[RMDB]
Description:
Source: RMDB library OK1LIB, as collected in RNAgym. Chemical mapping of a 177-nucleotide RNA with 2A3 and DMS. The 2A3 profile rests on 2,281 reads. Values cover nucleotides 27 to 126.
RNA sequence: GGGAACGACUCGAGUAGAGUCGAAAAAUCCUCGGCGCAAUUCACAGCGCGACGAUGAUGUCGACGAUAACGGCACGGGACCUGGAUGAUAAUGACACAUCGGAAGCGAGGUACGAUGUCCGUGUUGCGAUUAUGAGGUCUUCGGACCUCAUAAUCGAAAAGAAACAACAACAACAAC
Reactivity to 2A3 in 0.01 (KOAc 150mM, MgCl2 10mM, bicine 150mM(pH8.5), 24C), signal-to-noise 4, nucleotides 027 to 126: a010u070c000c000u030c010g050g000c010g010c030a030a160u270u180c070a090c100a150g010c000g050c000g050a040c010g000a000u020g050a060u040g000u000c010g040a110c060g000a030u040a300a050c060g000g030c000a020c090g040g040g000a040c010c040u070g140g000a080u100g010a020u090a170a160u280g020a000c000a000c000a020u000c000g010g050a090a010g100c020g010a020g000g040u010a040c060g040a110u110g020u020c000c000g010u010g010u050u070g000
Reactivity to DMS in 0.01 (KOAc 150mM, MgCl2 10mM, bicine 150mM(pH8.5), 24C), signal-to-noise 3, nucleotides 027 to 126: a020u010c010c000u000c010g000g000c020g030c000a090a040u080u010c160a150c250a050g000c030g000c010g000a110c000g010a030u000g000a160u000g000u020c000g030a150c300g010a050u000a070a170c140g000g010c010a040c010g010g000g010a080c060c060u040g010g000a140u030g000a070u030a110a090u060g010a050c060a050c000a000u000c000g040g000a090a100g040c050g010a040g000g020u000a120c040g000a090u000g010u010c020c000g070u010g070u000u010g020